Structure probing data (2A3 and DMS) for a 177-nucleotide construct. The RNA was probed in 150 mM KOAc, 10 mM MgCl2 and 150 mM bicine (pH 8.5) at 24 C. For 2A3, 976 sequencing reads were counted. For 2A3 the reverse transcriptase was SuperScript II with manganese.
RNA sequence: GGGAACGACUCGAGUAGAGUCGAAAAGAUCGAACCAGGGGUCGCGAACUGAAUUGUCAGUGAUCACCUGGGGCAAGAGCGGAAAGGCAGACUUGACUGAACCGGAGGGCACCGUCAAAUGGUCAGCGAGUAGACGUGUCUUCGGACACGUCUACUCAAAAGAAACAACAACAACAAC
Reactivity to 2A3 in 0.01 (KOAc 150mM, MgCl2 10mM, bicine 150mM(pH8.5), 24C), signal-to-noise 1, nucleotides 027 to 126: g030a100u110c070g000a050a060c010c000a010g030g000g000g000u010c010g000c010g020a060a070c030u090g120a230a220u300u060g050u090c140a050g010u020g020a010u000c020a100c300c000u000g020g010g020g000c040a000a070g020a000g060c050g070g000a120a120a080g130g050c040a030g060a060c060u090u080g030a140c000u040g030a030a060c020c010g000g000a080g020g060g000c070a030c010c070g050u000c000a000a060a130u080g000g000u060c040a030g040c020
Reactivity to DMS in 0.01 (KOAc 150mM, MgCl2 10mM, bicine 150mM(pH8.5), 24C), signal-to-noise 2, nucleotides 027 to 126: g010a090u010c120g030a180a250c000c000a040g000g000g000g000u000c030g000c020g020a200a110c020u000g000a070a050u010u000g000u010c110a200g020u000g000a030u000c000a100c000c000u000g000g020g020g010c160a080a110g010a040g020c010g040g000a030a120a070g000g000c100a090g010a050c030u000u000g010a080c100u010g000a090a100c060c030g010g020a070g000g000g020c070a070c100c030g020u000c110a020a080a150u030g010g000u000c110a070g030c070